[RMDB]
RNA sequence: GGGAACGACUCGAGUAGAGUCGAAAACAGAAGGGGCAGCCGAGGCAGGCUCAGGCGCCCAACCGCCAGAGCCGCAGAGUUUUGGGGUCCCCCCACUGAGGGCGACGAAGACGAGGUUGGGAACCUCUAUGGCUAGUAGUUUCGACUACUAGCCAUAAAAAGAAACAACAACAACAAC
Reactivity to DMS in 0.01 (KOAc 150mM, MgCl2 10mM, bicine 150mM(pH8.5), 24C), signal-to-noise 2, nucleotides 027 to 126: c110a070g000a180a110g010g000g020g000c070a090g000c030c020g000a070g030g010c080a120g010g000c010u000c030a030g000g010c030g040c020c030c130a060a020c180c000g030c010c000a060g000a040g040c000c000g000c160a110g010a090g000u000u000u000u010g010g000g010g000u000c020c010c010c030c030c040a080c140u010g000a070g000g000g020c060g010a100c060g000a080a110g020a070c100g000a050g000g000u000u000g000g000g010a130a080c060c020u010c090